[RMDB]
An RNA of 207 nucleotides, treated with DMS and 2A3 and read out base by base. For 2A3 the reverse transcriptase was SuperScript II with manganese. It was measured as part of the RMDB library M2RFPK. For DMS, 3,099 sequencing reads were counted. For 2A3, 4,711 sequencing reads were counted.
RNA sequence: GGGAACGACUCGAGUAGAGUCGAAAAAGCAUGUUAGGUUCGCAUGGUGCACUAUUGUGUUAUUAGUAACUAAGUAAGCUUACAAUCGAAAAUGUUUAACCAUAAAAGGGUAAAAUGGUUUAAGACAGAUACCCUCUGAGCUUCGGCUCAGAGGGAAGACGACAGUAUAGUUCGCUAUACUGUCGUCAAAAGAAACAACAACAACAAC
Reactivity to DMS in 0.01 (KOAc 150mM, MgCl2 10mM, bicine 150mM(pH8.5), 24C), signal-to-noise 2, nucleotides 027 to 156: a070g000c010a030u000g010u000u000a080g040g010u000u000c080g020c050a080u000g020g040u000g020c110a050c020u000a100u000u000g040u000g050u000u000a100u000u000a090g030u000a060a090c020u000a110a120g000u000a070a120g000c040u000u000a100c070a070a080u000c050g020a040a060a050a120u000g020u000u000u000a050a060c010c010a050u000a040a060a090a120g000g040g020u010a010a060a090a110u000g000g000u000u010u000a080a050g020a090c040a050g020a200u010a130c010c000c010u000c000u010g000a000g020c020u000u010c300g060g000c000u000c000a000g030a040g020g000g010a000a000
Reactivity to 2A3 in 0.01 (KOAc 150mM, MgCl2 10mM, bicine 150mM(pH8.5), 24C), signal-to-noise 4, nucleotides 027 to 156: a000g070c040a030u060g010u070u070a040g050g020u060u100c030g010c070a040u060g030g010u050g040c020a010c060u100a140u140u140g020u000g030u050u020a070u010u020a060g080u070a070a020c020u010a100a030g080u030a080a020g090c030u070u080a050c070a060a120u100c070g100a050a070a040a040u010g000u010u050u050a000a010c000c000a000u050a040a220a020a030g020g040g010u070a040a060a020a040u010g000g030u000u040u070a030a000g020a010c010a010g090a050u100a100c000c010c000u010c000u000g000a000g000c020u040u120c250g030g000c000u000c000a000g000a000g010g000g000a000a000